Structure probing data (2A3 and DMS) for a 177-nucleotide construct. For DMS, 1,887 sequencing reads were counted. Conditions: 150 mM KOAc, 10 mM MgCl2 and 150 mM bicine (pH 8.5), 24 C. DMS adducts were read by reverse transcription with MarathonRT. For 2A3 the reverse transcriptase was SuperScript II with manganese. For 2A3, 1,472 sequencing reads were counted. Reactivities are given for positions 27 through 126.

RNA sequence: GGGAACGACUCGAGUAGAGUCGAAAAACAGCCGCCAAAGAUUAGAGGGACCUGUGCUCCAUUGUUCUGGGUGAAAAGCAGUAUGUCUCCUUUCAGCUACUGCCAUGGUGACAUGCCGCAGUGGAUCCUACGUAGGCUGUUUCGACAGCCUACGUAGAAAAGAAACAACAACAACAAC
Reactivity to 2A3 in 0.01 (KOAc 150mM, MgCl2 10mM, bicine 150mM(pH8.5), 24C), signal-to-noise 1, nucleotides 027 to 126: a020c060a000g040c000c050g000c050c000a070a080a080g090a080u050u170a050g040a140g060g030g010a020c010c040u060g090u100g060c040u000c060c010a010u000u140g060u140u110c090u070g000g050g010u100g030a040a100a020a000g000c000a020g000u110a060u140g020u000c020u060c000c030u030u150u090c060a030g020c000u070a040c020u080g000c020c010a030u020g010g010u050g030a020c010a020u050g030c000c030g000c030a010g000u040g020g050a020u070c010
Reactivity to DMS in 0.01 (KOAc 150mM, MgCl2 10mM, bicine 150mM(pH8.5), 24C), signal-to-noise 2, nucleotides 027 to 126: a110c130a090g030c030c050g010c030c100a080a120a080g010a070u040u000a080g010a100g020g010g000a060c040c080u000g020u000g000c060u000c030c050a070u000u010g020u000u000c090u010g000g000g030u020g000a060a050a090a110g000c010a030g020u000a080u010g020u010c010u000c020c040u010u010u000c150a170g010c050u000a030c110u000g010c040c010a040u000g000g000u020g000a130c030a020u000g000c120c060g000c010a020g040u000g000g000a110u000c060